[RMDB]
RNA sequence: GGGAACGACUCGAGUAGAGUCGAAAAAAAAACAGAUUUCGGUAUCGCUAUAUCUCAUCGACAUUUGGACUUCUCCCAUCUACCUUGGCUAUCAAGUCGGGGUUUUUAAAAGCAGAGUUCGCUCUGCGUUCGUUAGUAUGUUCGCAUACUAACGAACAAAAGAAACAACAACAACAAC
Reactivity to DMS in 0.01 (KOAc 150mM, MgCl2 10mM, bicine 150mM(pH8.5), 24C), signal-to-noise 2, nucleotides 027 to 126: a020a010a030a040a040c030a010g000a040u000u000u000c020g010g010u010a060u010c100g010c150u000a050u000a090u000c090u020c080a040u000c020g010a030c090a030u000u010u000g020g000a120c120u000u010c090u000c010c010c020a060u010c100u020a050c020c000u000u000g020g000c000u000a130u010c250a070a020g030u000c010g010g010g000g010u000u000u020u010u000a070a050a090a090g010c000a000g000a010g030u010u010c240g020c010u000c000u000g020c000
Reactivity to 2A3 in 0.01 (KOAc 150mM, MgCl2 10mM, bicine 150mM(pH8.5), 24C), signal-to-noise 2, nucleotides 027 to 126: a000a020a010a010a010c050a040g060a010u090u080u020c030g000g060u040a160u110c050g000c140u130a080u030a080u300c140u060c060a030u030c010g020a000c030a010u020u000u010g020g020a000c020u090u020c020u040c070c000c000a030u010c010u010a050c000c000u030u030g010g000c010u030a100u300c130a130a010g000u000c030g030g000g000g020u020u020u000u000u040a000a000a020a000g050c000a010g010a000g020u040u060c120g010c060u000c000u010g030c020